[RMDB]
RNA sequence: GGGAACGACUCGAGUAGAGUCGAAAACGGCUUUGACUGUGAUUCAUGGCAAAAAAGCUGGAAUAACCCUGCCAAGUCUUAGAAGCUUUAAGAUUCAUCGCAUUGAACUUGAUACGUAUAGUACAGCUUUGAUCCAAAACUUCGGUUUUGGAUCAAAAAAAGAAACAACAACAACAAC
Reactivity to 2A3 in 0.01 (KOAc 150mM, MgCl2 10mM, bicine 150mM(pH8.5), 24C), signal-to-noise 2, nucleotides 027 to 126: c020g000g050c010u010u000u080g060a090c000u040g060u040g080a090u040u040c040a100u170g090g000c020a010a000a210a000a000a000g000c000u000g020g090a010a080u060a040a030c010c000c020u040g000c000c000a030a010g000u040c030u010u060a020g000a300a010g080c000u160u010u020a000a170g020a100u210u080c010a000u070c120g000c160a050u020u140g000a050a030c000u050u050g020a010u110a060c030g030u130a130u060a160g010u020a010c010a060g000c010
Reactivity to DMS in 0.01 (KOAc 150mM, MgCl2 10mM, bicine 150mM(pH8.5), 24C), signal-to-noise 3, nucleotides 027 to 126: c040g000g030c000u000u000u020g010a180c080u000g020u050g010a070u020u030c070a110u000g010g000c070a000a070a140a060a040a020g000c010u000g010g020a200a200u020a110a130c000c000c010u010g030c020c040a060a030g010u000c030u040u000a020g000a150a140g000c140u010u000u000a050a070g000a040u000u010c300a020u010c050g010c010a110u080u010g020a040a100c140u000u030g020a100u000a040c050g000u050a050u050a050g000u000a040c110a020g020c120

An RNA of 177 nucleotides, treated with 2A3 and DMS and read out base by base. Source: RMDB libraries RFM100 and RFMREP, as collected in RNAgym. For 2A3 the reverse transcriptase was SuperScript II with manganese. For DMS the reverse transcriptase was MarathonRT.